[RMDB]
RNA sequence: GGGAACGACUCGAGUAGAGUCGAAAAUGUGCAAUCGGCAGUGGCCAAAUUGAGGCAACUUUCUGAUGCUGACAUUUCAAUUGAAAGUGUCUUCAUGGUUCAAGAGUUUGCCAGUAGAAUAGAAAAAUCAUGUCAAUUCCUUCGGGAAUUGACAUGAAAAAGAAACAACAACAACAAC
Reactivity to 2A3 in 0.01 (KOAc 150mM, MgCl2 10mM, bicine 150mM(pH8.5), 24C), signal-to-noise 3, nucleotides 027 to 126: u110g070u050g000c010a020a040u050c030g100g000c090a090g070u030g090g000c000c000a120a120a050u060u100g090a030g070g000c010a040a090c040u060u090u010c070u030g050a050u020g050c040u040g050a010c030a020u060u110u140c090a160a210u140u130g040a080a040a000g050u030g030u060c020u180u090c020a070u120g050g020u110u130c050a130a030g040a040g080u130u090u030g000c000c010a020g010u050a000g070a080a030u110a070g190a000a230a030a000a050
Reactivity to DMS in 0.01 (KOAc 150mM, MgCl2 10mM, bicine 150mM(pH8.5), 24C), signal-to-noise 2, nucleotides 027 to 126: u030g020u000g050c060a150a030u020c040g030g010c210a040g000u020g000g010c000c020a010a060a080u050u040g000a160g000g020c000a020a040c010u000u010u010c030u000g020a060u040g000c290u000g000a040c000a070u020u020u020c080a290a140u050u060g010a000a020a020g020u000g030u040c030u000u000c000a030u000g000g030u020u020c030a070a020g010a110g020u010u000u020g000c000c040a050g000u060a060g000a130a120u030a090g020a010a050a050a110a100

An RNA of 177 nucleotides, treated with 2A3 and DMS and read out base by base.
It was measured as part of the RMDB library OK1LIB.
Values are in units of 0.01, from 0 to 300, in steps of 10.
2A3 adducts were read by reverse transcription with SuperScript II with manganese.
The reactions ran in a buffer of 150 mM KOAc, 10 mM MgCl2 and 150 mM bicine (pH 8.5), at 24 C.
For DMS, 1,840 sequencing reads were counted.